[RMDB]
RNA sequence: GGGAACGACUCGAGUAGAGUCGAAAAGGCAACUGCUAUGAGAAAGAGUCAGGCGCAAGACAGCAUCUAUGGGCUUGCGGAUGAUUUGAUUUCUCCCUCGACCCUGACAUCCGAAAGUCGCUAUCAAUAUACCAAGGGAGUUCGCUCCCUUGGUAUAAAAAGAAACAACAACAACAAC
Reactivity to 2A3 in 0.01 (KOAc 150mM, MgCl2 10mM, bicine 150mM(pH8.5), 24C), signal-to-noise 5, nucleotides 027 to 126: g010g000c040a090a050c140u120g000c030u080a150u220g010a020g020a040a000a020g030a010g010u000c010a000g230g160c010g000c010a020a010g000a040c010a020g090c020a150u080c110u230a250u200g070g120g060c000u000u010g010c000g020g040a030u030g000a000u000u010u070g150a170u000u010u000c010u010c010c020c000u030c010g050a080c020c000c000u010g050a010c020a040u070c010c030g070a090a060a000g030u020c000g000c050u040a030u140c020a070a080
Reactivity to DMS in 0.01 (KOAc 150mM, MgCl2 10mM, bicine 150mM(pH8.5), 24C), signal-to-noise 3, nucleotides 027 to 126: g000g030c080a140a080c070u040g020c010u030a070u020g010a040g010a040a050a130g000a010g000u000c020a040g000g000c010g000c000a020a020g000a050c050a070g000c170a120u040c220u060a090u040g000g010g040c000u000u000g000c020g030g000a030u000g010a000u020u030u010g000a210u000u000u000c010u000c000c100c030u010c040g000a120c060c000c000u020g010a050c100a070u020c060c030g000a080a040a060g010u000c060g020c060u020a120u040c070a040a160